RNA sequence: GGGAACGACUCGAGUAGAGUCGAAAAACAAAUCAAUGGUCAUAGGAGGGACAAGAGGGCGAACAGAGGUUGUCAUUAUCGCGAAAAAAGCAGACUGGACGCGGCUUCUGAUGACACUUUCUGGAGGCGGAUGACUGAGUUUCGACUCAGUCAUCCGAAAAGAAACAACAACAACAAC
Reactivity to DMS in 0.01 (KOAc 150mM, MgCl2 10mM, bicine 150mM(pH8.5), 24C), signal-to-noise 2, nucleotides 027 to 126: a010c180a100a130a040u030c190a080a140u030g010g000u020c020a100u020a110g000g020a170g060g000g030a060c150a040a050g000a100g000g000g030c010g000a120a070c080a000g000a000g000g000u080u000g010u000c010a000u000u000a050u050c010g000c040g020a000a100a070a120a020a040g010c060a080g000a130c210u000g000g000a300c030g000c010g000g030c230u030u030c170u020g000a060u030g000a070c040a070c010u000u030u020c000u000g000g000a210g000g060
Reactivity to 2A3 in 0.01 (KOAc 150mM, MgCl2 10mM, bicine 150mM(pH8.5), 24C), signal-to-noise 2, nucleotides 027 to 126: a000c050a020a000a070u080c050a040a130u130g140g010u100c050a020u070a130g090g040a040g010g000g000a060c000a110a000g000a100g070g010g010c000g010a130a030c000a070g040a000g090g000u040u100g010u010c000a000u000u100a040u010c020g000c010g050a210a040a040a000a000a000g060c060a040g030a140c040u080g000g020a000c000g000c000g030g000c040u130u040c010u080g010a000u000g000a010c000a000c080u150u300u060c020u010g040g010a040g100g000

Overview: Source: RMDB library OK1LIB, as collected in RNAgym. The record gives the reactivity of an RNA of 177 nucleotides to DMS and 2A3. The reactions ran in a buffer of 150 mM KOAc, 10 mM MgCl2 and 150 mM bicine (pH 8.5), at 24 C.